[RMDB]
RNA sequence: GGGAACGACUCGAGUAGAGUCGAAAAAUGUGGACGGAUAUCAAAAAAUGGGCCGCUGACUCAUGGAAAUGGGUAGGCGAUCACACGGUCGGGGCGCUAAACCUUAUCGUUGAUACGGUUUCCGCGAUCAUUAACACGAUCAGAAAAUUGAUUGCCGUCACACACUGAGGUUCGCCUCAGUGUGUGAAAAAGAAACAACAACAACAAC
Reactivity to 2A3 in 0.01 (KOAc 150mM, MgCl2 10mM, bicine 150mM(pH8.5), 24C), signal-to-noise 1, nucleotides 027 to 156: a000u090g010u040g070g000a040c020g000g000a010u030a020u140c080a020a000a040a040a000a130u090g000g010g050c000c000g000c030u030g060a020c000u000c020a070u090g090g080a100a300a070u010g040g000g000u030a090g000g000c000g000a000u030c000a020c010a000c160g010g000u000c000g030g000g020g000c000g010c010u020a010a020a020c000c000u050u050a060u000c030g300u040u300g020a000u020a040c010g000g000u030u000u040c050c000g000c000g010a080u070c030a070u060u150a050a010c050a080c170g020a020u030c010a000g070a020a040a060a080u040u060g000a020u000u200g050c000c010g000

Annotation:
Structure probing data (2A3) for a 207-nucleotide construct. The reactions ran in a buffer of 150 mM KOAc, 10 mM MgCl2 and 150 mM bicine (pH 8.5), at 24 C.